[RMDB]
RNA sequence: GGGAACGACUCGAGUAGAGUCGAAAAUUGGGGUGCGGAUGAGAACUACAUACUGCUUGAGUGGGGCAUCGAUCGUGAUUUUGAACAUUAUAGGAAGGCGAAUCUGUACCGGGCGGCGCUGAUGCUCACUCCCCUACGAGUUCGCUCGUAGGGGAGUAAAAGAAACAACAACAACAAC
Reactivity to DMS in 0.01 (KOAc 150mM, MgCl2 10mM, bicine 150mM(pH8.5), 24C), signal-to-noise 1, nucleotides 027 to 126: u000u020g000g000g050g000u000g010c000g070g010a030u000g010a140g030a090a030c170u020a110c090a080u000a130c090u000g020c020u000u020g010a120g000u000g000g000g010g030c040a110u000c050g000a120u040c080g000u020g010a070u020u000u010u000g030a050a070c090a020u020u060a020u080a070g000g000a050a080g000g000c030g000a080a070u000c010u000g000u000a060c000c110g000g000g080c030g000g050c080g010c070u000g000a060u070g000c070u000c020
Reactivity to 2A3 in 0.01 (KOAc 150mM, MgCl2 10mM, bicine 150mM(pH8.5), 24C), signal-to-noise 2, nucleotides 027 to 126: u030u090g030g000g040g000u050g030c010g040g050a070u040g000a000g040a020a010c070u070a070c050a020u170a010c020u120g030c010u030u100g030a040g050u080g010g000g000g000c000a100u020c000g030a020u060c090g080u000g080a050u080u090u000u000g000a000a000c020a130u150u210a070u170a110g130g040a130a000g040g030c000g000a000a000u010c020u120g040u040a040c000c000g040g000g000c040g010g000c040g000c040u060g000a020u050g140c050u000c020
Source: RMDB library OK1LIB, as collected in RNAgym. An RNA of 177 nucleotides, treated with DMS and 2A3 and read out base by base. DMS adducts were read by reverse transcription with MarathonRT. For DMS, 1,655 sequencing reads were counted.